An RNA of 177 nucleotides, treated with DMS and 2A3 and read out base by base. Values cover nucleotides 27 to 126.

RNA sequence: GGGAACGACUCGAGUAGAGUCGAAAAGAAAGAAAGAAAACAAAGUCCUAUAAACCUCAAUAAUCCCUCGUUAGGAGGGCCACGCGAGUACUUUGGCGUGUCCCAAAGAAAGAAAAGAAAAAGAAAAGGUACUAUCACCAUUCGUGGUGAUAGUACCAAAAGAAACAACAACAACAAC
Reactivity to DMS in 0.01 (KOAc 150mM, MgCl2 10mM, bicine 150mM(pH8.5), 24C), signal-to-noise 1, nucleotides 027 to 126: g040a060a010a030g010a020a080a170g000a190a170a070a200c070a010a040a000g000u000c010c000u000a200u000a040a000a090c060c000u000c060a020a220u010a050a270u000c000c000c000u050c090g020u000u000a010g000g010a090g000g020g000c090c100a050c100g000c090g090a070g000u050a020c220u090u000u090g000g000c030g010u000g040u020c010c000c000a140a060a110g000a050a020a110g000a090a000a020a200g000a010a000a030a060a260g000a090a070a100a120
Reactivity to 2A3 in 0.01 (KOAc 150mM, MgCl2 10mM, bicine 150mM(pH8.5), 24C), signal-to-noise 2, nucleotides 027 to 126: g070a030a050a000g100a000a080a000g060a010a090a000a030c040a070a120a000g090u100c010c010u050a050u100a110a090a010c020c090u100c010a030a000u090a040a030u110c020c020c000u000c050g210u060u180a090g050g200a000g000g040g000c000c000a010c040g010c010g040a030g180u170a070c030u060u010u100g180g000c020g000u000g030u040c000c000c000a000a000a000g030a050a080a000g160a030a070a000a000g260a040a020a060a090a000g110a020a090a010a000
Source: RMDB library OK1LIB, as collected in RNAgym.